[RMDB]
RNA sequence: GGGAACGACUCGAGUAGAGUCGAAAAUAAAAAUGGCUUGUCUAAUAGCUGCAUUUUGUUAGAUAAAUGUCCACCUCCAAGACCACCAACUUCACCAUACCCACCCUUGCCAAAGGACAAGUUGAAUCCACCCACACCUAGUAUUUACUUGGAAAAACAUCCGUAUUUAGUUCGCUAAAUACGGAUGAAAAGAAACAACAACAACAAC
Reactivity to 2A3 in 0.01 (KOAc 150mM, MgCl2 10mM, bicine 150mM(pH8.5), 24C), signal-to-noise 2, nucleotides 027 to 156: u120a000a040a010a000a020u050g020g000c000u020u020g020u000c070u030a060a040u050a170g030c070u080g060c100a080u100u140u100u120g040u020u030a030g000a040u080a030a180a060u090g040u030c010c020a010c010c050u000c030c020a040a040g020a040c000c010a040c030c040a060a000c010u050u040c010a040c070c000a040u100a110c020c010c010a010c000c000c020u020u060g030c030c040a050a020a060g020g000a020c020a040a030g000u040u050g080a070a030u020c030c000a020c000c000c000a030c000a010c000c010u000a010g010u000a140u060u200u020a040c030u030u100g020g000a060a050a000a000a020
Reactivity to DMS in 0.01 (KOAc 150mM, MgCl2 10mM, bicine 150mM(pH8.5), 24C), signal-to-noise 1, nucleotides 027 to 156: u000a000a050a110a080a120u010g010g010c010u000u000g000u000c030u010a060a070u000a030g020c080u000g040c090a120u000u000u000u000g030u020u010a060g000a060u000a000a070a080u000g030u030c030c040a100c040c040u000c010c040a040a060g010a100c060c020a160c050c040a040a060c070u000u010c020a080c020c020a090u010a100c040c020c010a080c090c020c020u000u000g010c040c020a060a120a140g010g000a040c030a030a120g010u030u020g010a090a110u010c030c020a100c010c010c030a080c040a080c040c050u000a100g010u000a100u000u010u000a070c070u000u010g020g000a100a040a040a140a130